[RMDB]
The data come from the RNA Mapping Database (RMDB), library OK1LIB. Chemical mapping of a 177-nucleotide RNA with 2A3 and DMS. The DMS profile rests on 3,675 reads. For 2A3, 3,096 sequencing reads were counted. Conditions: 150 mM KOAc, 10 mM MgCl2 and 150 mM bicine (pH 8.5), 24 C.

RNA sequence: GGGAACGACUCGAGUAGAGUCGAAAAGUGUGGUAGCACACGCCUGUAGUCCCAGCUACUCGGGAGGCUGAGGCACAAGAAUCACUUGAACCCCAGAGGCGGAGAUUGCAAUCAGCCAAGAUUGCACUAAUCCUUCGGUGUUCGCACCGAAGGAUUAAAAAGAAACAACAACAACAAC
Reactivity to 2A3 in 0.01 (KOAc 150mM, MgCl2 10mM, bicine 150mM(pH8.5), 24C), signal-to-noise 4, nucleotides 027 to 126: g020u000g000u020g050g140u300a100g130c040a010c000a000c060g030c000c000u040g040u060a030g050u030c010c000c000a000g000c010u040a040c020u030c090g050g030g000a030g000g000c010u020g040a070g030g040c020a010c020a040a040g080a150a070u120c040a020c080u060u090g040a050a040c010c000c010c010a030g000a040g060g000c070g020g040a050g040a110u050u100g020c010a020a020u020c000a030g110c060c000a020a030g000a010u010u010g010c000a010c010
Reactivity to DMS in 0.01 (KOAc 150mM, MgCl2 10mM, bicine 150mM(pH8.5), 24C), signal-to-noise 2, nucleotides 027 to 126: g010u000g090u010g040g000u020a140g000c050a030c040a070c070g040c000c000u000g000u000a060g020u000c000c000c000a100g000c020u000a020c020u010c050g000g000g040a080g030g000c010u010g010a120g030g010c130a130c030a080a070g010a140a170u000c090a010c060u000u000g020a130a050c080c000c040c050a030g000a040g000g000c030g010g000a090g000a080u020u000g020c010a020a000u020c010a090g020c140c220a070a110g000a020u000u020g020c030a080c260